[RMDB]
RNA sequence: GGGAACGACUCGAGUAGAGUCGAAAAGCAGAUACUUUCUGUGAGAAAAGAGGUAGUUAAAGAAGUAAGGGCAGAACCACAUAUUGUUUGGAGACCAAGUGCACUAUCCAUUGUCUAUGAUGAGGAAACAGAAAGCCCAAGUUAUCAUCAUAAAAUCAAGUGAUGCGUAAUUCGUUACGCAUCACUUAAAAGAAACAACAACAACAAC
Reactivity to 2A3 in 0.01 (KOAc 150mM, MgCl2 10mM, bicine 150mM(pH8.5), 24C), signal-to-noise 2, nucleotides 027 to 156: g000c010a000g020a060u070a110c100u080u120u030c040u030g040u010g020a080g050a030a090a010a020g050a000g030g060u050a020g020u130u150a060a070a070g040a100a030g030u090a010a020g010g010g000c050a040g030a050a020c080c000a020c030a030u250a100u050u230g050u010u080u090g020g020a070g000a020c010c010a020a010g090u060g050c040a030c030u070a060u050c040c070a070u090u040g020u060c010u040a020u050g010a000u020g000a020g070g050a060a020a000c020a030g050a070a080a040g000c000c000c030a020a000g020u020u040a020u020c000a000u010c010a020u010a080a120a000a030u180c110
Reactivity to DMS in 0.01 (KOAc 150mM, MgCl2 10mM, bicine 150mM(pH8.5), 24C), signal-to-noise 2, nucleotides 027 to 156: g000c030a120g020a090u010a110c100u000u000u010c020u020g090u010g000a100g000a070a040a120a040g010a080g030g050u010a070g010u000u000a040a090a090g000a080a080g010u000a050a060g020g010g050c030a140g000a040a200c000c030a000c140a080u000a080u000u000g000u000u000u000g010g020a140g020a180c110c040a080a040g010u000g020c080a070c040u010a060u000c010c040a080u010u000g020u000c040u000a030u010g000a040u000g010a060g020g010a100a060a060c050a160g000a000a090a050g020c010c040c060a040a190g000u000u000a050u000c010a020u000c050a060u000a040a030a120a130u000c120